The data come from the RNA Mapping Database (RMDB), library OK3TST. Chemical mapping of a 207-nucleotide RNA with 2A3 and DMS. The DMS profile rests on 3,830 reads. The 2A3 profile rests on 3,464 reads. The RNA was probed in 150 mM KOAc, 10 mM MgCl2 and 150 mM bicine (pH 8.5) at 24 C.

[RMDB]
RNA sequence: GGGAACGACUCGAGUAGAGUCGAAAACUCACCUUUUUGUCUAAGAUCUAUUGAGAAAGGGAAAUAUGGGAAGGAGAACCAUUUGAUCAGAAUACAACCAAUAGUCUUUAAGCAUUGUUAAAGUAUGAAACUGAAAUACAUUCAAAACACUUAAUCCCACCCUUUCCUUAUUCGUAAGGAAAGGGUGAAAAGAAACAACAACAACAAC
Reactivity to 2A3 in 0.01 (KOAc 150mM, MgCl2 10mM, bicine 150mM(pH8.5), 24C), signal-to-noise 5, nucleotides 027 to 156: c020u020c030a110c000c000u050u060u010u080u100g130u050c060u070a070a060g010a120u020c040u060a100u100u120g040a070g050a080a040a030g030g020g020a030a120a030u180a040u060g010g000g020a040a050g010g040a060g010a030a030c010c010a050u060u050u090g070a070u050c020a010g070a100a030u100a080c050a050a030c050c000a030a020u050a050g040u020c030u040u090u040a060a020g010c010a040u020u060g040u030u090a110a070a050g000u020a080u090g080a130a100a040c020u030g020a020a020a070u130a030c020a030u050u170c030a050a020a040a040c040a010c050u110u140a080a040u130c060c050
Reactivity to DMS in 0.01 (KOAc 150mM, MgCl2 10mM, bicine 150mM(pH8.5), 24C), signal-to-noise 3, nucleotides 027 to 156: c040u000c090a160c060c010u000u010u000u000u010g010u000c060u000a080a110g010a130u010c080u000a040u000u000g020a130g000a090a060a110g000g020g000a050a100a110u010a070u010g010g000g030a080a130g000g010a120g000a130a120c010c010a100u010u000u000g000a090u000c060a110g020a120a140u000a110c050a090a100c040c010a040a070u000a070g020u000c040u000u000u000a030a090g010c020a080u000u010g010u010u000a050a040a090g030u010a110u010g010a040a040a300c100u000g010a060a050a080u010a040c040a140u010u000c090a050a090a070a040c100a060c040u000u010a080a050u000c040c000